[RMDB]
RNA sequence: GGGAACGACUCGAGUAGAGUCGAAAACGUCGGUGAUCCCCAGCCGGCGCAGCGUUGCCCGGCCGGCGUCGUCGAGGCGGCUCAGCUCGCUGGACCGGAACAGCCGCCCCGGCCGCAAUGCGGUUGCGUCCGGUCGCUACUUCGGUAGCGACCGGACAAAAGAAACAACAACAACAAC
Reactivity to 2A3 in 0.01 (KOAc 150mM, MgCl2 10mM, bicine 150mM(pH8.5), 24C), signal-to-noise 2, nucleotides 027 to 126: c000g060u020c030g060g000u130g060a300u090c000c230c040c020a000g030c030c000g000g000c000g090c050a000g100c010g080u100u070g010c020c070c120g030g000c000c000g000g120c010g060u160c040g010u030c020g030a030g040g070c000g000g000c000u020c040a020g000c080u230c140g000c050u050g000g010a080c040c040g080g000a010a030c010a060g000c020c030g050c000c020c000c000g000g030c020c010g010c110a000a190u170g050c000g050g020u230u060g120c010
Structure probing data (2A3) for a 177-nucleotide construct. For 2A3, 521 sequencing reads were counted. It was measured as part of the RMDB library OK1LIB.